[RMDB]
Structure probing data (2A3 and DMS) for a 177-nucleotide construct. The data come from the RNA Mapping Database (RMDB), library OK2TRN. Conditions: 150 mM KOAc, 10 mM MgCl2 and 150 mM bicine (pH 8.5), 24 C.

RNA sequence: GGGAACGACUCGAGUAGAGUCGAAAAGUGGCGGCCAGAUGGCCGAAAACACCCUCGAAGGCGAAUGGUGCACGGACGGGUAGCCGCAGCGACACCGUGCCCGCUGAUGCGGUGGCAGACUCGAAUCUCGUUCUCCACAUUUCGAUGUGGAGAACGAAAAAGAAACAACAACAACAAC
Reactivity to 2A3 in 0.01 (KOAc 150mM, MgCl2 10mM, bicine 150mM(pH8.5), 24C), signal-to-noise 1, nucleotides 027 to 126: g040u050g000g030c000g010g030c040c000a100g100a300u300g060g000c000c000g000a000a000a000a010c070a080c000c040c000u080c030g140a090a030g020g020c060g060a190a100u250g000g000u140g000c070a010c080g030g060a040c020g020g080g000u020a030g100c050c050g020c030a050g170c000g020a030c050a030c030c000g040u010g020c000c000c000g080c070u130g050a150u140g010c050g110g000u020g070g000c040a040g040a100c000u000c060g030a010a050u080c030
Reactivity to DMS in 0.01 (KOAc 150mM, MgCl2 10mM, bicine 150mM(pH8.5), 24C), signal-to-noise 2, nucleotides 027 to 126: g010u020g000g000c000g000g020c020c010a170g000a190u010g010g020c000c000g000a000a030a140a090c020a110c010c020c000u000c090g010a160a100g010g000c030g010a070a040u010g000g010u000g000c020a300c030g000g040a090c110g000g010g000u000a120g030c010c100g000c050a090g070c010g000a160c030a080c020c000g010u000g000c020c050c030g000c050u000g000a110u000g010c140g000g010u010g000g030c100a060g000a040c010u000c050g000a100a070u000c030